An RNA of 177 nucleotides, treated with DMS and 2A3 and read out base by base. For DMS the reverse transcriptase was MarathonRT. Conditions: 150 mM KOAc, 10 mM MgCl2 and 150 mM bicine (pH 8.5), 24 C. Values cover nucleotides 27 to 126.
RNA sequence: GGGAACGACUCGAGUAGAGUCGAAAAGAUAUGGACUCGAUGUGACAUGAUAGCCUUCGGAAACGAAGGCAAUAUCAACAGCACACGAGUCCUAAGUCAAAGAAGACCGCGUUCGCGCGGUCUUCAAGUCUUUAUAAUCGUUCGCGAUUAUAAAGACAAAAGAAACAACAACAACAAC
Reactivity to DMS in 0.01 (KOAc 150mM, MgCl2 10mM, bicine 150mM(pH8.5), 24C), signal-to-noise 2, nucleotides 027 to 126: g000a010u000a030u000g000g000a010c000u000c000g000a220u000g020u000g020a040c040a130u000g020a010u020a070g020c000c000u000u000c010g020g000a000a020a050c010g020a010a000g010g030c020a010a010u000a010u000c010a190a180c120a190g000c000a030c000a030c000g000a000g020u000c000c000u000a000a080g000u010c000a130a180a190g000a020a020g000a010c000c010g020c000g040u000u010c260g020c000g030c000g010g000u000c000u000u000c000a040a140
Reactivity to 2A3 in 0.01 (KOAc 150mM, MgCl2 10mM, bicine 150mM(pH8.5), 24C), signal-to-noise 2, nucleotides 027 to 126: g000a000u020a020u080g010g000a000c010u030c050g300a300u000g030u000g060a080c120a300u300g000a030u000a040g110c000c020u010u010c010g020g010a010a020a020c010g010a010a010g000g000c010a010a010u010a000u000c000a020a200c080a050g040c010a000c010a010c030g010a000g010u000c000c000u000a000a000g000u000c000a000a100a120g020a000a000g000a000c020c000g040c060g070u070u110c260g020c000g040c080g160g010u000c000u000u000c010a000a000